[RMDB]
RNA sequence: GGGAACGACUCGAGUAGAGUCGAAAAGAAGGUCGAGUGCACGACCAGAGAGUGCGGUGAGUGACCGACAAAGAGUUCGAAUCGGAACGAACCCCCGCAAACGAUCGACUGAAGAUCGAAGUGAGAACCAUCCACUGACCUUCGGGUCAGUGGAUGGAAAAGAAACAACAACAACAAC
Reactivity to 2A3 in 0.01 (KOAc 150mM, MgCl2 10mM, bicine 150mM(pH8.5), 24C), signal-to-noise 2, nucleotides 027 to 126: g030a000a040g060g000u010c000g120a090g060u100g100c050a000c100g040a000c000c000a000g000a000g020a000g050u200g050c070g040g000u000g000a180g000u150g030a060c000c000g000a000c000a040a210a000g080a000g000u090u070c060g000a050a140u100c000g020g150a010a000c000g000a020a040c040c000c000c020c030g120c020a160a240a000c010g000a040u010c000g030a070c170u260g100a110a050g050a000u000c000g000a100a000g030u050g050a030g000a000a000
Reactivity to DMS in 0.01 (KOAc 150mM, MgCl2 10mM, bicine 150mM(pH8.5), 24C), signal-to-noise 1, nucleotides 027 to 126: g060a030a180g000g030u010c000g000a120g010u010g000c030a010c010g060a160c040c020a000g020a050g000a150g000u000g000c000g100g040u100g000a160g060u020g000a020c040c000g000a170c090a030a220a090g000a110g000u000u020c020g000a090a160u000c050g000g020a290a080c000g000a000a050c000c000c000c000c010g000c210a010a140a160c050g000a070u000c010g000a100c260u000g100a300a170g000a050u000c000g030a090a220g010u040g000a060g000a050a180
An RNA of 177 nucleotides, treated with 2A3 and DMS and read out base by base. It was measured as part of the RMDB library OK1LIB. For DMS, 1,095 sequencing reads were counted. For DMS the reverse transcriptase was MarathonRT. The reactions ran in a buffer of 150 mM KOAc, 10 mM MgCl2 and 150 mM bicine (pH 8.5), at 24 C.